[RMDB]
RNA sequence: GGGAACGACUCGAGUAGAGUCGAAAACUGUGGUUCGCCACAGAAAAGUCGAUGGGAGCGCCUGGAGGCGCGGCGGCCUCCUGCUUGUCGUCGGCAGCAGCGUUAUAAAGUCUACCUUCGGGUAGACCCAGUAGUUUCAGUUCGCUGAAACUACUGGAAAAGAAACAACAACAACAAC
Reactivity to DMS in 0.01 (KOAc 150mM, MgCl2 10mM, bicine 150mM(pH8.5), 24C), signal-to-noise 1, nucleotides 027 to 126: c010u000g000u020g010g000u000u020c200g000c000c000a010c000a020g000a110a050a110a120g020u000c000g010a010u000g020g000g010a040g010c070g010c300c300u000g000g000a030g000g000c000g000c100g020g010c170g000g000c020c010u000c000c000u000g010c010u000u010g000u000c000g020u000c040g000g030c050a120g010c140a040g010c120g000u010u020a090u000a080a130a180g000u000c010u000a010c000c010u000u010c160g020g010g000u000a000g020a000c020
Reactivity to 2A3 in 0.01 (KOAc 150mM, MgCl2 10mM, bicine 150mM(pH8.5), 24C), signal-to-noise 2, nucleotides 027 to 126: c000u010g000u000g000g050u030u060c200g040c070c000a000c000a000g010a020a190a000a010g000u000c000g020a020u020g000g000g090a020g000c060g090c130c260u080g100g010a010g020g020c060g000c120g110g030c060g120g000c000c000u000c020c020u050g020c000u100u050g240u150c030g000u000c000g010g010c020a010g030c040a010g000c050g060u120u120a160u120a190a160a030g000u020c000u010a010c020c000u020u070c210g050g000g000u010a010g000a000c000
Chemical mapping of a 177-nucleotide RNA with DMS and 2A3. The DMS profile rests on 1,003 reads. DMS adducts were read by reverse transcription with MarathonRT. For 2A3, 1,231 sequencing reads were counted. It was measured as part of the RMDB library RFMREP. In probing experiments dimethyl sulfate is read out at A N1 and C N3, which are open when not base-paired. The RNA was probed in 150 mM KOAc, 10 mM MgCl2 and 150 mM bicine (pH 8.5) at 24 C.